[RMDB]
RNA sequence: GGGAACGACUCGAGUAGAGUCGAAAAGAUAUGGAGUUAGGGAGCUUCGCGAUGAAAGCUUUCGGAAACGAAAGCUGGAGCGGUGCGAAGAACUAACUCCUAAGUCAAACAGGGCUUCGGCCCUGAAGGUUUAGUAUACCUUCGGGUAUACUAAACCAAAAGAAACAACAACAACAAC
Reactivity to 2A3 in 0.01 (KOAc 150mM, MgCl2 10mM, bicine 150mM(pH8.5), 24C), signal-to-noise 3, nucleotides 027 to 126: g020a010u060a030u160g000g000a000g000u000u010a010g030g020g050a060g040c010u090u070c020g030c020g270a300u050g030a010a030a000g000c010u020u000u000c010g020g020a070a070a010c010g000a020a010a000g000c040u000g010g000a020g000c060g000g060u070g020c000g130a260a010g010a000a000c000u000a000a000c000u020c010c000u000a020a000g000u000c010a000a050a110c010a010g010g010g010c020u090u150c290g250g000c010c000c010u020g000a010a020
Reactivity to DMS in 0.01 (KOAc 150mM, MgCl2 10mM, bicine 150mM(pH8.5), 24C), signal-to-noise 4, nucleotides 027 to 126: g000a050u000a300u000g000g020a010g000u000u000a000g010g000g000a060g020c010u000u000c010g020c010g030a100u010g000a200a110a030g000c000u010u000u000c000g010g000a100a080a160c000g010a020a010a000g000c000u000g000g000a070g010c110g000g000u010g000c000g020a060a110g010a080a140c010u010a000a010c010u000c000c000u000a010a080g000u010c020a110a120a240c010a020g000g010g020c010u000u030c230g020g000c000c000c000u000g010a030a050
Notes
An RNA of 177 nucleotides, treated with 2A3 and DMS and read out base by base. The 2A3 profile rests on 5,260 reads.